[RMDB]
RNA sequence: GGGAACGACUCGAGUAGAGUCGAAAACUUCAGAGAGAGAAACGGUACUACCGGAUGCAUCGUAUGGAACGGCAGGAUCGCCGAGUGCAAGAACAACCUCUCGUGUCGUCGCCGGGAACGUGAGGUCACCCUCUGAAAGAUGAGCGUCAAGGGCGGCUCGCUAUAUAAAAUUCGUUUUAUAUAGCGAAAAAGAAACAACAACAACAAC
Reactivity to DMS in 0.01 (KOAc 150mM, MgCl2 10mM, bicine 150mM(pH8.5), 24C), signal-to-noise 3, nucleotides 027 to 156: c050u000u000c030a050g020a090g010a080g010a190g000a090a090a080c030g010g040u000a040c050u010a070c020c010g010g010a140u010g030c060a070u000c090g000u000a300u020g020g010a100a080c030g000g020c010a040g000g000a060u000c050g050c030c020g000a300g030u000g030c050a060a110g010a110a130c090a080a060c010c000u000c010u000c010g030u000g030u000c020g010u000c010g010c000c000g000g010g020a110a050c050g000u040g010a050g000g010u000c030a050c020c010c020u030c030u020g010a060a090a140g000a120u000g000a100g010c030g010u010c020a040a150g010g020g010c000g010g000c070
Reactivity to 2A3 in 0.01 (KOAc 150mM, MgCl2 10mM, bicine 150mM(pH8.5), 24C), signal-to-noise 5, nucleotides 027 to 156: c020u050u040c030a010g010a000g010a000g000a000g050a140a100a040c040g020g020u100a160c070u120a090c100c010g030g010a020u090g020c020a050u080c060g070u160a150u170g070g080a080a070c030g010g000c020a040g120g180a200u120c090g010c000c010g010a020g000u020g020c030a040a040g040a130a060c040a030a010c020c000u010c010u010c010g010u030g050u050c020g010u010c010g010c020c000g000g010g010a030a000c010g010u020g010a010g000g030u040c030a050c040c000c000u030c000u030g020a030a020a020g040a060u140g040a020g070c030g070u070c060a040a040g090g010g010c000g000g030c010

The record gives the reactivity of an RNA of 207 nucleotides to DMS and 2A3.
Values are in units of 0.01, from 0 to 300, in steps of 10.
For DMS the reverse transcriptase was MarathonRT.
Conditions: 150 mM KOAc, 10 mM MgCl2 and 150 mM bicine (pH 8.5), 24 C.
2A3 adducts were read by reverse transcription with SuperScript II with manganese.
As a SHAPE reagent, 2A3 marks flexible, mostly unpaired nucleotides at the ribose 2'-OH.
For DMS, 7,240 sequencing reads were counted.